Chemical mapping of a 207-nucleotide RNA with 2A3 and DMS.
The reactions ran in a buffer of 150 mM KOAc, 10 mM MgCl2 and 150 mM bicine (pH 8.5), at 24 C.
For DMS the reverse transcriptase was MarathonRT.
Reactivities are given for positions 27 through 156.
Source: RMDB library OK3TST, as collected in RNAgym.
For 2A3 the reverse transcriptase was SuperScript II with manganese.
As a SHAPE reagent, 2A3 marks flexible, mostly unpaired nucleotides at the ribose 2'-OH.
RNA sequence: GGGAACGACUCGAGUAGAGUCGAAAACGUGGGCUUUGAGCUGGAACAGUACGACCGCAUGGCGGAGCUGCUGCGCACUAUGAAAGGAAAGGCGCUGGUCAGCGUGAACGAUAUCCCGCAAAUGCGCUUGGCCUUCAACGGCCUCGCCAUGCAGCGGGAAGAGCGAGAAUUUCGAUUCUCGCUCUUCAAAAGAAACAACAACAACAAC
Reactivity to 2A3 in 0.01 (KOAc 150mM, MgCl2 10mM, bicine 150mM(pH8.5), 24C), signal-to-noise 5, nucleotides 027 to 156: c060g060u090g010g030g020c070u130u100u150g050a070g000c030u040g050g060a020a080c040a070g070u160a020c040g060a100c050c040g020c020a020u040g010g000c000g020g000a010g000c020u040g000c050u080g000c030g040c050a130c090u060a080u300g180a170a080a040g080g040a100a100a030g060g000c020g010c010u030g030g030u050c020a010g000c000g040u030g040a030a010c050g040a040u090a060u200c000c020c010g000c030a030a080a050u130g000c010g010c040u060u100g010g010c020c000u130u140c090a120a070c040g010g000c000c000u000c000g000c000c000a000u020g010c020a010g000c040g000g000
Reactivity to DMS in 0.01 (KOAc 150mM, MgCl2 10mM, bicine 150mM(pH8.5), 24C), signal-to-noise 3, nucleotides 027 to 156: c070g010u000g020g010g030c050u000u010u010g010a150g110c010u000g010g000a050a090c060a100g000u010a060c040g030a160c020c030g030c010a110u000g020g020c030g020g010a110g020c040u000g010c010u010g000c040g020c080a100c000u030a100u010g010a140a130a130g010g010a030a080a100g010g010c000g030c000u000g000g000u000c040a080g000c010g020u000g020a060a080c080g010a190u000a300u010c020c000c010g010c030a080a060a120u000g010c020g020c010u010u000g020g000c000c010u000u020c160a090a090c070g000g000c000c000u020c060g000c010c070a030u000g000c010a080g040c030g000g000